Notes:
Chemical mapping of a 207-nucleotide RNA with 2A3.
RNA sequence: GGGAACGACUCGAGUAGAGUCGAAAAGCGGCAGGCAAUGGACGACAAGGAGGUCGGCGUCUGGCGGCUCAAGGCAGCCUGCGGCGUCUCCCACCAGACGUUGGCGAACCUCGCCAAAGGGGUCGGCGGCGUCGAGCUGAAAAAGGCGGAGCGGAUCAUUAGGUGGAUGAUUCGUCAUCCACCUAAUAAAAGAAACAACAACAACAAC
Reactivity to 2A3 in 0.01 (KOAc 150mM, MgCl2 10mM, bicine 150mM(pH8.5), 24C), signal-to-noise 1, nucleotides 027 to 156: g020c030g080g000c010a020g000g000c030a030a060u080g000g030a120c020g000a020c090a090a090g080g020a010g070g060u060c030g010g040c000g000u040c020u090g120g060c070g020g000c000u030c040a000a060g070g030c020a080g200c010c000u060g010c000g020g040c000g000u010c040u000c010c020c000a020c010c000a000g020a080c020g020u050u020g020g040c060g000a160a090c010c010u030c010g100c080c030a100a030a000g020g000g010g010u010c000g000g040c030g000g000c000g000u020c010g000a030g010c030u080g060a140a080a010a020a000g000g020c000g060g000a020g030c000g020g000a010u040c080
The reactions ran in a buffer of 150 mM KOAc, 10 mM MgCl2 and 150 mM bicine (pH 8.5), at 24 C. Values cover nucleotides 27 to 156.